[RMDB]
Structure probing data (DMS and 2A3) for a 177-nucleotide construct.
The DMS profile rests on 1,681 reads.
The 2A3 profile rests on 599 reads.
Conditions: 150 mM KOAc, 10 mM MgCl2 and 150 mM bicine (pH 8.5), 24 C.
DMS adducts were read by reverse transcription with MarathonRT.
It was measured as part of the RMDB library OK1LIB.
RNA sequence: GGGAACGACUCGAGUAGAGUCGAAAAGAAAAAGAGGCAGAGCCUUUGCUCUCAUACACCCCAUUGUAUUGGGUGGAUUGCUGUGUUAUAGACUGUGGGCAGGUUACUUAGGAUGUCCUCAGAGAAAACCUAGCGUAGCGUUCGCGCUACGCUAGGUAAAAGAAACAACAACAACAAC
Reactivity to DMS in 0.01 (KOAc 150mM, MgCl2 10mM, bicine 150mM(pH8.5), 24C), signal-to-noise 2, nucleotides 027 to 126: g030a050a140a000a110a000g000a080g000g030c000a070g000a190g000c010c030u000u000u030g010c130u020c020u000c040a140u000a120c000a100c070c000c040c110a130u090u010g140u070a180u030u000g000g040g070u030g040g020a100u000u000g000c080u000g030u010g000u040u060a100u000a140g000a110c010u040g000u000g000g020g000c000a060g000g000u010u070a000c200u000u030a060g000g000a110u000g000u000c010c000u000c050a060g000a070g000a100a110a010
Reactivity to 2A3 in 0.01 (KOAc 150mM, MgCl2 10mM, bicine 150mM(pH8.5), 24C), signal-to-noise 2, nucleotides 027 to 126: g120a030a080a000a010a040g160a010g060g110c110a060g010a060g020c000c000u140u060u180g000c000u000c000u030c000a010u070a190c000a010c000c000c000c110a000u010u100g110u190a100u050u140g060g030g000u000g010g170a090u080u070g070c030u070g010u040g000u060u130a280u010a100g220a070c010u010g000u060g020g000g000c000a000g030g090u200u080a040c020u150u300a050g240g070a120u070g060u030c000c000u030c000a010g030a000g040a040a010a010